This 177-nucleotide RNA was probed chemically with 2A3 and DMS. Conditions: 150 mM KOAc, 10 mM MgCl2 and 150 mM bicine (pH 8.5), 24 C. 2A3 adducts were read by reverse transcription with SuperScript II with manganese. Source: RMDB library OK2TST, as collected in RNAgym.
RNA sequence: GGGAACGACUCGAGUAGAGUCGAAAAGGCCUUGAGUUGCGCGCCCGUCAGCGUGAUGACGGUCAGGGUGUUGCCGAAGGGCUGCACGGUGAUGGCUUCCUCGAAGGUCACCGGCCCCUGGUCGAUGGAGUUUGGAUUGAUUCGUCAAUCCAAACUCAAAAGAAACAACAACAACAAC
Reactivity to 2A3 in 0.01 (KOAc 150mM, MgCl2 10mM, bicine 150mM(pH8.5), 24C), signal-to-noise 1, nucleotides 027 to 126: g090g030c000c000u040u050g060a040g020u060u070g090c040g000c010g050c040c080c030g100u080c050a030g010c030g090u090g120a100u070g030a040c040g000g040u030c040a070g080g000g000u170g090u190u170g000c000c000g050a090a030g110g020g000c010u030g000c070a090c060g050g020u030g000a020u090g190g160c000u020u070c020c050u070c100g060a070a030g000g000u010c010a000c010c050g000g030c000c000c000c050u020g060g020u060c020g030a090u160g080
Reactivity to DMS in 0.01 (KOAc 150mM, MgCl2 10mM, bicine 150mM(pH8.5), 24C), signal-to-noise 2, nucleotides 027 to 126: g030g010c010c020u000u010g020a170g030u010u010g010c020g020c030g010c050c030c020g010u030c050a070g030c080g010u010g010a050u010g020a100c010g010g010u010c010a050g010g000g030u010g030u000u000g020c000c020g000a180a090g000g010g000c040u010g000c040a090c020g010g000u000g000a020u000g020g000c040u000u000c030c160u000c300g000a040a050g000g020u000c000a020c000c020g020g000c040c010c000c010u000g010g020u000c070g000a160u000g000